RNA sequence: GGGAACGACUCGAGUAGAGUCGAAAAGAUCCGCGAGCAAGCGGGCAGUGUACGCUCGAUCGUGCGCGGAGAUACCGGUGGAAACUGGAUGACGUCCAGGCGCCGAGUCAACUGUGAGGUGGUACGCUGUUCCCUUGGGGUCUUGGGAUACACCGGAAAACUACGAACAUUUCGAUGUUCGUAGUUUAAAAGAAACAACAACAACAAC
Reactivity to 2A3 in 0.01 (KOAc 150mM, MgCl2 10mM, bicine 150mM(pH8.5), 24C), signal-to-noise 4, nucleotides 027 to 156: g040a040u000c020c020g030c080g120a060g060c050a070a040g020c050g020g000g000c000a020g010u010g040u070a020c060g070c080u070c050g090a110u060c070g090u190g110c030g000c020g020g050a050g020a010u130a060c020c000g030g000u030g060g140a180a120a070c010u000g000g030a060u070g160a050c110g080u030c000c000a020g020g060c000g010c010c000g020a040g050u040c040a050a080c090u090g050u090g120a070g010g110u150g110g030u030a020c020g020c010u030g000u120u230c010c010c000u000u000g030g000g020g010u020c010u030u080g040g000g000a070u090a090c050a070c040c030g040g000a050
Reactivity to DMS in 0.01 (KOAc 150mM, MgCl2 10mM, bicine 150mM(pH8.5), 24C), signal-to-noise 2, nucleotides 027 to 156: g020a100u000c000c000g000c060g030a180g040c070a040a040g020c060g020g010g040c000a060g000u020g040u000a070c030g010c000u000c030g000a050u000c040g030u000g030c020g030c010g020g000a130g010a150u010a050c060c000g020g000u010g030g000a100a120a090c030u000g000g000a120u000g000a160c160g010u000c030c030a090g000g000c030g070c040c000g020a150g010u010c040a090a080c080u000g020u010g020a160g000g020u010g030g000u000a060c040g000c020u010g000u020u000c000c010c000u010u010g000g010g030g020u010c030u000u000g010g000g000a200u010a100c030a090c010c000g000g000a170